Overview
The data come from the RNA Mapping Database (RMDB), library OK1LIB. An RNA of 177 nucleotides, treated with DMS and 2A3 and read out base by base. Reactivities are rounded to 0.1 and cut off at 0 and 3. For 2A3, 5,164 sequencing reads were counted.

RNA sequence: GGGAACGACUCGAGUAGAGUCGAAAAGGGCGCGUCGAUGCUCUCGUUGCCGGUCGUAACCUGCUUCUCGCCAAGAUCAAGGCACGUGGUCUCGGCCUUAAGGUGGUUGGCAAUCCGCUCAAUGAAAACGAUUACUCCGAUUCGUCGGAGUAAUCGUAAAAGAAACAACAACAACAAC
Reactivity to DMS in 0.01 (KOAc 150mM, MgCl2 10mM, bicine 150mM(pH8.5), 24C), signal-to-noise 2, nucleotides 027 to 126: g000g020g020c060g000c050g030u000c110g020a100u040g020c030u040c070u010c020g000u000u000g000c080c030g030g000u000c060g010u040a080a050c030c000u020g020c050u020u000c040u020c160g000c030c010a070a060g020a030u030c070a100a120g020g000c010a030c030g050u000g020g010u000c000u000c020g010g010c000c030u000u010a040a130g000g020u000g020g000u000u030g030g050c040a030a100u040c030c020g030c010u000c060a060a070u020g020a060a050a100
Reactivity to 2A3 in 0.01 (KOAc 150mM, MgCl2 10mM, bicine 150mM(pH8.5), 24C), signal-to-noise 6, nucleotides 027 to 126: g030g010g010c030g010c030g090u110c060g050a060u110g010c000u000c000u000c070g070u070u040g030c030c000g030g020u030c040g020u060a070a110c000c010u060g050c010u130u060c060u040c050g030c000c020a050a010g020a060u050c020a030a070g080g020c090a060c170g040u050g010g020u020c020u010c040g020g000c010c000u060u100a050a010g030g000u020g000g050u040u060g010g000c000a010a040u030c020c040g030c040u080c070a060a150u150g100a040a050a010